[RMDB]
RNA sequence: GGGAACGACUCGAGUAGAGUCGAAAAGUGCUCACUGUUCUCUUGCCAAGACACGGAGUGGACAGUAACUCGCCUUUACACGGGCGUUGGUAUCAGUUCUUGCUUCGAAGCUGCGAAUAGCGUCGCAUCAUCCUCUUUUGUUCGCAAAAGAGGAUGAAAAAGAAACAACAACAACAAC
Reactivity to DMS in 0.01 (KOAc 150mM, MgCl2 10mM, bicine 150mM(pH8.5), 24C), signal-to-noise 3, nucleotides 027 to 126: g050u000g010c050u010c100a080c090u000g000u000u000c010u000c020u000u030g020c050c120a130a100g020a090c160a210c080g040g000a030g020u010g020g000a030c050a120g010u000a050a060c070u010c020g020c010c000u010u010u010a120c250a100c300g010g010g000c020g020u010u000g030g000u010a050u010c080a070g010u000u000c010u000u000g010c040u010u000c020g020a070a080g020c050u010g040c040g000a100a100u000a040g030c090g040u000c040g000c100a150
Reactivity to 2A3 in 0.01 (KOAc 150mM, MgCl2 10mM, bicine 150mM(pH8.5), 24C), signal-to-noise 2, nucleotides 027 to 126: g010u040g030c030u040c030a050c050u030g060u080u020c020u010c000u040u120g090c020c040a100a040g080a110c030a030c120g010g020a000g000u020g000g030a030c030a010g030u010a030a010c010u030c010g000c000c010u030u070u120a080c120a020c080g000g010g010c060g030u040u030g020g030u110a100u160c040a030g030u050u020c010u060u160g020c020u020u020c030g040a040a030g030c040u030g020c040g040a080a040u100a140g050c000g130u050c010g000c000a020